The data come from the RNA Mapping Database (RMDB), libraries RFM100 and RFMREP. This 177-nucleotide RNA was probed chemically with 2A3 and DMS. High 2A3 reactivity points to a flexible backbone, as in loops and unpaired stretches. Conditions: 150 mM KOAc, 10 mM MgCl2 and 150 mM bicine (pH 8.5), 24 C. DMS (dimethyl sulfate) methylates the pairing face of unpaired adenines and cytosines.
RNA sequence: GGGAACGACUCGAGUAGAGUCGAAAAGUAACUAUUUUUUUUAGUUUUGAUUCGAUCACAAUUGAAACGAAACAUUAGAAUCAAAUCAAUUCCAACUGGAAGAAAAAAUGGUGAAUAUUCAUUGAUCACACAUGAAUUGGUUCGCCAAUUCAUGUGUAAAAGAAACAACAACAACAAC
Reactivity to 2A3 in 0.01 (KOAc 150mM, MgCl2 10mM, bicine 150mM(pH8.5), 24C), signal-to-noise 5, nucleotides 027 to 126: g010u040a000a000c010u000a010u020u000u010u000u000u000u010u100a070g010u010u010u000u030g020a010u000u000c010g030a070u090c070a030c080a240a140u180u150g060a200a140a040c110g060a110a060a030c040a080u060u070a110g020a030a010u020c000a010a000a010u020c040a060a100u030u040c030c020a110a110c280u250g010g010a020a010g030a020a010a000a010a010a010u010g000g000u020g030a020a010u140a110u090u120c100a070u020u200g080a070u100c050
Reactivity to DMS in 0.01 (KOAc 150mM, MgCl2 10mM, bicine 150mM(pH8.5), 24C), signal-to-noise 3, nucleotides 027 to 126: g010u010a100a050c000u000a000u020u000u000u020u000u020u060u020a070g010u010u000u010u000g000a000u000u010c010g000a060u020c150a090c220a070a060u000u000g010a100a100a080c150g000a150a090a090c160a060u030u020a070g030a030a030u000c010a020a000a050u010c050a110a120u020u000c010c030a190a100c280u030g000g000a050a040g000a000a010a010a050a030a000u000g000g000u000g000a070a170u010a030u040u010c060a140u040u000g000a120u040c150